About this RNA:
Structure probing data (DMS) for a 177-nucleotide construct.

RNA sequence: GGGAACGACUCGAGUAGAGUCGAAAAGAUAUGGAAGCUCGGGAGGAUGACACUCGGAAACGAGUGGAGUCCGAAGAACGAGGCUUCCUAAGUCAAACUCACGGGAUGGUUCGCCAUCCCGUGAGAACUUCGAUUUACAGUUCGCUGUAAAUCGAAGAAAAGAAACAACAACAACAAC
Reactivity to DMS in 0.01 (KOAc 150mM, MgCl2 10mM, bicine 150mM(pH8.5), 24C), signal-to-noise 1, nucleotides 027 to 126: g000a050u020a190u010g000g000a020a010g010c020u000c000g020g000g020a050g020g020a010u020g020a300c000a010c000u000c000g030g000a020a060a160c000g000a010g020u000g030g000a300g000u000c000c000g000a060a150g000a170a250c000g000a070g040g010c000u000u000c000c000u000a010a070g000u000c020a090a120a280c020u010c000a010c000g000g000g000a000u000g040g020u000u020c180g000c000c020a010u020c000c000c000g000u000g000a000g010a020a070
About this RNA:
DMS adducts were read by reverse transcription with MarathonRT. The data come from the RNA Mapping Database (RMDB), library TTRDEL.